[RMDB]
RNA sequence: GGGAACGACUCGAGUAGAGUCGAAAAAGGAUGCAGUACUACACUAUCAUUUGAAUCAAAUCCCAAAGGUUGAAUGUUUAGCCUUGGUCCUGCAGGUGAUACUAGUGGGAGGAAGUAGAACUUUGCAGAUCAUAGCUGGUUUCGACCAGCUAUGAUCAAAAGAAACAACAACAACAAC
Reactivity to DMS in 0.01 (KOAc 150mM, MgCl2 10mM, bicine 150mM(pH8.5), 24C), signal-to-noise 2, nucleotides 027 to 126: a060g020g010a090u000g030c090a040g020u000a080c060u000a050c240a140c050u000a060u000c030a040u000u000u000g030a100a120u010c110a070a100a150u010c050c010c020a030a100a050g010g010u000u020g000a050a130u010g010u020u000u000a030g000c050c000u010u000g000g010u000c110c060u010g020c030a020g010g030u010g010a170u010a040c050u000a030g000u010g000g000g030a100g000g000a050a100g010u000a030g000a080a070c060u000u000u000g000c100a080
Reactivity to 2A3 in 0.01 (KOAc 150mM, MgCl2 10mM, bicine 150mM(pH8.5), 24C), signal-to-noise 1, nucleotides 027 to 126: a000g100g000a020u060g000c040a010g050u020a040c020u050a000c080a020c070u030a020u130c000a080u010u060u180g110a050a050u030c040a070a070a130u020c050c000c000a040a030a010g060g020u060u020g050a110a100u100g120u100u100u070a020g000c000c000u010u060g050g030u070c020c000u000g000c020a020g040g020u010g000a000u010a070c030u060a100g060u090g000g100g030a040g050g050a010a050g000u060a020g030a000a010c020u070u130u170g030c090a020